[RMDB]
RNA sequence: GGGAACGACUCGAGUAGAGUCGAAAAUGAUGCUCAACUCCAUCCGGGCCCAGCUGGGGGCGGUCAUCGUGGGGAACAGGGGGGCGGUGGUCCGACAGAAACGCUCCUGGCUGUCCACCGCGGCCCGACUUGGUCACACUUUCGAGUGUGACCAAGUAAAAGAAACAACAACAACAAC
Reactivity to 2A3 in 0.01 (KOAc 150mM, MgCl2 10mM, bicine 150mM(pH8.5), 24C), signal-to-noise 3, nucleotides 027 to 126: u070g030a020u110g000c060u040c090a070a070c070u010c040c010a080u090c060c000g010g000g030c000c010c000a020g000c050u060g010g000g000g000g000c010g040g090u100c070a150u080c100g040u070g000g060g050g040a080a090c090a200g060g040g000g010g020g000c010g020g000u020g000g020u010c020c020g050a060c050a090g100a110a160a000c030g010c000u010c000c000u010g020g010c000u020g010u000c020c000a030c000c000g020c020g000g010c000c000c000g000
Reactivity to DMS in 0.01 (KOAc 150mM, MgCl2 10mM, bicine 150mM(pH8.5), 24C), signal-to-noise 2, nucleotides 027 to 126: u010g000a080u000g000c120u000c010a100a130c070u050c030c050a050u020c090c020g010g060g000c020c030c020a020g020c040u000g010g000g020g000g080c050g020g020u010c120a120u010c080g010u000g000g000g000g050a090a050c070a050g000g010g000g000g000g010c010g000g010u010g010g010u000c040c030g010a090c110a120g010a090a100a050c050g010c050u000c000c000u010g000g050c010u000g000u010c020c020a050c010c020g030c020g040g000c000c000c010g000
Chemical mapping of a 177-nucleotide RNA with 2A3 and DMS. For 2A3 the reverse transcriptase was SuperScript II with manganese. Source: RMDB library OK1LIB, as collected in RNAgym. DMS adducts were read by reverse transcription with MarathonRT.